[RMDB]
RNA sequence: GGGAACGACUCGAGUAGAGUCGAAAAACUACCGAGGUACGCCUCGGUAGAUGCGAUGAUGAGAGCGAACUGCACUGAAAAGUGAUGACAGGGCCUUGCUGAGCAGUAGUGGCUACGGCCACUACAACCCAAUGCCUGAAUUCGUUCAGGCAUUGGGAAAAGAAACAACAACAACAAC
Reactivity to 2A3 in 0.01 (KOAc 150mM, MgCl2 10mM, bicine 150mM(pH8.5), 24C), signal-to-noise 6, nucleotides 027 to 126: a000c000u000a010c000c000g000a000g030g000u070a050c280g090c010c000u000c000g000g000u000a000g000a000u040g010c010g070a080u060g010a040u060g020a030g010a000g050c020g020a060a040c040u040g020c010a000c050u060g040a070a040a040a060g050u060g050a100u090g030a060c020a050g020g020g000c010c010u020u050g000c030u030g030a010g000c040a020g010u000a000g000u010g010g000c000u030a030c230g080g000c010c000a000c000u000a010c000a000a030
Reactivity to DMS in 0.01 (KOAc 150mM, MgCl2 10mM, bicine 150mM(pH8.5), 24C), signal-to-noise 3, nucleotides 027 to 126: a080c010u000a000c000c000g000a000g010g030u000a090c240g030c000c010u000c010g010g000u000a000g030a060u020g000c080g010a070u020g000a120u000g000a090g000a060g010c060g000a060a070c040u000g020c010a040c030u000g000a100a060a080a040g010u000g030a060u040g030a250c050a070g000g000g000c050c020u010u010g000c040u000g000a170g030c080a130g030u000a000g000u000g010g010c020u000a070c220g000g030c000c010a010c000u000a020c040a070a100

The record gives the reactivity of an RNA of 177 nucleotides to 2A3 and DMS. For DMS the reverse transcriptase was MarathonRT. Conditions: 150 mM KOAc, 10 mM MgCl2 and 150 mM bicine (pH 8.5), 24 C. Values cover nucleotides 27 to 126.